[RMDB]
RNA sequence: GGGAACGACUCGAGUAGAGUCGAAAAAGACGGCAACCCAUCGACUGUCACCAGAUGCUGCAUCACCUGAUCACUGAUGGCUCAACGGUAUCCGGCGGUACAACUGAAUACUUGUAGCUGCCUUUUGAAAAGGAGUUCAUCUUCGGAUGAACUCCAAGUCAGAAUUGUACUUCGGUACAAUUCUGACAAAAGAAACAACAACAACAAC
Reactivity to 2A3 in 0.01 (KOAc 150mM, MgCl2 10mM, bicine 150mM(pH8.5), 24C), signal-to-noise 4, nucleotides 027 to 156: a000g050a010c030g020g010c020a040a050c000c000c040a030u090c050g120a120c050u040g020u070c020a020c040c000a020g020a090u090g040c040u050g030c010a030u010c020a040c000c020u040g020a060u060c030a020c090u040g010a030u050g060g010c030u020c060a080a090c050g040g000u020a060u060c040c030g000g010c020g010g010u040a010c020a040a030c050u170g060a170a060u130a130c030u040u070g030u040a040g040c010u010g020c020c000u110u120u060u110g150a130a120a030a060g000g000a000g000u000u000c000a010u000c000u030u040c130g150g000a000u000g010a000a020c000u000c000c000a010a000
Reactivity to DMS in 0.01 (KOAc 150mM, MgCl2 10mM, bicine 150mM(pH8.5), 24C), signal-to-noise 1, nucleotides 027 to 156: a120g000a050c010g020g000c000a120a110c110c000c000a060u020c040g050a060c040u010g010u000c040a040c000c000a050g010a100u000g010c030u010g000c060a120u010c070a050c030c000u010g010a130u010c090a200c150u000g030a050u010g050g020c030u010c050a060a120c060g000g030u030a070u000c010c000g010g030c000g030g020u000a070c120a030a170c030u010g040a070a050u010a010c020u010u030g010u000a050g030c000u000g020c020c080u000u010u000u000g000a000a030a140a240g020g010a090g010u000u000c000a030u010c000u000u010c290g090g030a040u020g000a000a010c000u020c010c030a030a000